The record gives the reactivity of an RNA of 177 nucleotides to DMS and 2A3. The 2A3 profile rests on 5,009 reads. Conditions: 150 mM KOAc, 10 mM MgCl2 and 150 mM bicine (pH 8.5), 24 C.
[RMDB]
RNA sequence: GGGAACGACUCGAGUAGAGUCGAAAAGCGGGUGAGGCCGUGCGCCCCUGGAUCCAGGUGAGGCCACAGGCCCCUGGGUCCGGGAGAGGCCAUGCGCCCCUAAAACAUGGUGACUUCGGUCACCAUGGGUUUGUUUAAUGUUCGCAUUAAACAAACCAAAAGAAACAACAACAACAAC
Reactivity to DMS in 0.01 (KOAc 150mM, MgCl2 10mM, bicine 150mM(pH8.5), 24C), signal-to-noise 4, nucleotides 027 to 126: g020c140g010g000g040u000g000a100g000g020c000c010g030u010g030c210g000c060c020c000c000u000g010g000a010u010c010c000a020g000g010u010g000a100g000g030c000c010a140c230a210g020g020c000c000c000c000u010g000g010g010u000c000c000g000g000g000a070g000a130g010g010c000c000a040u000g000c040g010c000c000c000c000u000a040a050a090a300c000a000u000g000g010u000g010a020c000u000u020c230g030g000u000c000a010c000c000a000u000g000
Reactivity to 2A3 in 0.01 (KOAc 150mM, MgCl2 10mM, bicine 150mM(pH8.5), 24C), signal-to-noise 1, nucleotides 027 to 126: g120c090g020g030g040u080g040a110g020g000c020c010g050u050g110c090g060c010c010c000c000u020g000g000a000u010c010c000a010g050g060u130g110a210g010g030c030c000a170c050a160g030g020c000c000c000c000u010g000g010g000u020c000c000g000g000g000a010g000a000g000g020c010c000a010u060g000c050g030c000c000c020c000u040a060a050a010a040c010a000u000g010g010u000g010a010c010u030u050c280g040g000u000c000a000c000c010a000u010g000